RNA sequence: GGGAACGACUCGAGUAGAGUCGAAAAUUAAAGCGCGAAAAAGAUCGAUCGAUCGUUUGAACGCGCAACUCGAAGUUUGAUACGGGCAUACUAGCUAGCUAGCUAGCAAAACAAACUUCGUAAAAAACAUACCAAGGGGAUUCGUCCCCUUGGUAUGAAAAGAAACAACAACAACAAC
Reactivity to 2A3 in 0.01 (KOAc 150mM, MgCl2 10mM, bicine 150mM(pH8.5), 24C), signal-to-noise 2, nucleotides 027 to 126: u110u050a120a060a010g000c010g000c010g070a040a000a000a010a060g000a010u010c030g080a130u140c140g000a000u000c040g090u030u080u050g050a150a020c010g000c010g000c000a000a080c020u000c010g010a000a000g000u000u010u030g060a090u080a150c050g090g090g000c080a050u060a160c040u000a010g010c000u010a020g150c040u100a010g010c000u050a000g000c030a010a070a040a010c010a010a000a000c000u010u010c010g000u020a010a100a000a000a000a000
Reactivity to DMS in 0.01 (KOAc 150mM, MgCl2 10mM, bicine 150mM(pH8.5), 24C), signal-to-noise 5, nucleotides 027 to 126: u010u010a060a120a130g000c000g030c000g000a050a100a040a040a050g010a000u000c000g020a150u030c230g000a010u000c000g010u000u000u000g020a100a140c010g010c000g010c020a060a060c190u000c010g000a010a010g010u000u000u000g010a070u000a070c160g000g010g020c140a180u010a140c000u000a010g010c010u000a140g020c150u010a050g000c000u000a010g020c060a020a090a070a110c010a010a010a000c000u000u000c000g010u000a000a040a090a080a040a060